[RMDB]
RNA sequence: GGGAACGACUCGAGUAGAGUCGAAAAACGAGGCCGUGCCUACUACGGUAGGCAAGGCCUCGAAUUACGUUCAUCUACUUAAUCGUAGACGCAUCAAUACAUCAUUCAUGGAACGGGGGAUGGUGAAACUAGAAUCAAACGUUCGCGUUUGAUUCAACCACGCAAAAUGGUUCGCCAUUUUGCGUGGAAAAGAAACAACAACAACAAC
Reactivity to 2A3 in 0.01 (KOAc 150mM, MgCl2 10mM, bicine 150mM(pH8.5), 24C), signal-to-noise 2, nucleotides 027 to 156: a000c020g010a000g010g000c000c010g000u020g000c010c020u000a010c010u010a010c210g140g000u000a000g030g000c010a000a000g000g020c000c000u000c000g000a000a010u010u030a010c000g000u000u010c020a010u000c010u000a020c000u030u190a110a050u150c070g000u010a020g020a050c010g040c030a100u180c090a100a170u100a270c000a010u020c000a000u020u020c000a010u020g110g000a020a000c000g000g000g000g000g000a000u000g000g000u010g040a070a010a000c120u080a090g000a000a000u000c000a000a000a000c000g020u050u070c230g040c010g130u000u010u020g000a000u000u000c000a010a020